[RMDB]
RNA sequence: GGGAACGACUCGAGUAGAGUCGAAAACUUUCGAUGGGACGUCGGUACGUGCAACGCACGAUCGCAAGUAUCCCGGAAGAAGCCCUUACGGAGAUGCGAAAGCACGCGUUCUCUCCUAAAAGGGACAUCAACGCCAGUCUUUCGAGACUGGCGUUGAAAAAGAAACAACAACAACAAC
Reactivity to 2A3 in 0.01 (KOAc 150mM, MgCl2 10mM, bicine 150mM(pH8.5), 24C), signal-to-noise 3, nucleotides 027 to 126: c000u110u070u020c020g050a050u190g020g020g000a010c000g030u090c000g070g030u170a300c010g020u000g000c100a190a090c170g010c040a010c010g000a020u000c010g000c040a000a110g050u050a270u080c000c050c030g000g000a080a060g000a020a010g010c040c000c000u000u000a020c070g000g000a000g000a000u070g000c000g030a190a160a150g240c210a010c140g040c030g020u040u060c070u000c000u000c090c010u060a170a180a000a050g000g010g000a030c000a050
Reactivity to DMS in 0.01 (KOAc 150mM, MgCl2 10mM, bicine 150mM(pH8.5), 24C), signal-to-noise 2, nucleotides 027 to 126: c000u010u050u000c040g020a300u250g020g000g000a050c020g000u090c010g000g020u050a060c020g020u000g000c000a050a300c130g000c000a000c020g000a020u010c000g030c090a140a120g000u030a050u000c000c160c000g000g030a260a020g020a110a080g000c000c000c000u000u000a300c250g000g000a000g010a080u060g000c000g090a050a020a160g030c180a000c060g000c010g000u000u020c230u000c000u000c110c000u050a020a150a090a000g000g010g000a050c160a130
Background:
This 177-nucleotide RNA was probed chemically with 2A3 and DMS. The reactions ran in a buffer of 150 mM KOAc, 10 mM MgCl2 and 150 mM bicine (pH 8.5), at 24 C.